[RMDB]
RNA sequence: GGGAACGACUCGAGUAGAGUCGAAAAGAUAUGGAACGUGUGUUGGAGAUCCAAUUCGGAAACGAAUUGAAGAUCUAUGAAGACACCGUUCCUAAGUCAAAGCGAUAGUUCUUCGGAACUAUCGCAACUCUGUAAUUGAGUUCGCUCAAUUACAGAGAAAAGAAACAACAACAACAAC
Reactivity to DMS in 0.01 (KOAc 150mM, MgCl2 10mM, bicine 150mM(pH8.5), 24C), signal-to-noise 5, nucleotides 027 to 126: g000a020u000a070u020g000g000a010a000c000g010u010g010u000g020u000u000g010g000a080g010a000u000c000c000a010a010u000u000c010g010g000a010a010a040c000g010a010a010u000u000g010a160a190g010a010u000c000u000a300u020g010a180a240g000a000c010a000c010c000g020u000u000c000c000u000a000a040g000u000c010a090a130a160g010c000g010a010u010a000g010u000u000c010u000u010c280g020g010a010a010c000u000a000u000c000g030c000a010a040
Reactivity to 2A3 in 0.01 (KOAc 150mM, MgCl2 10mM, bicine 150mM(pH8.5), 24C), signal-to-noise 8, nucleotides 027 to 126: g010a010u020a000u060g000g000a010a020c000g080u080g020u010g020u290u030g080g070a250g000a100u000c010c000a010a000u010u000c000g000g020a000a010a010c000g000a010a010u010u030g060a140a090g010a000u000c000u030a300u230g050a010a000g010a000c000a000c000c000g000u010u020c000c000u000a000a000g000u000c030a120a150a050g000c000g000a000u000a010g000u000u010c010u050u050c300g060g010a000a000c000u000a000u010c000g000c000a000a000

Record summary:
Source: RMDB library TTRDES, as collected in RNAgym. This 177-nucleotide RNA was probed chemically with DMS and 2A3. The RNA was probed in 150 mM KOAc, 10 mM MgCl2 and 150 mM bicine (pH 8.5) at 24 C. DMS adducts were read by reverse transcription with MarathonRT.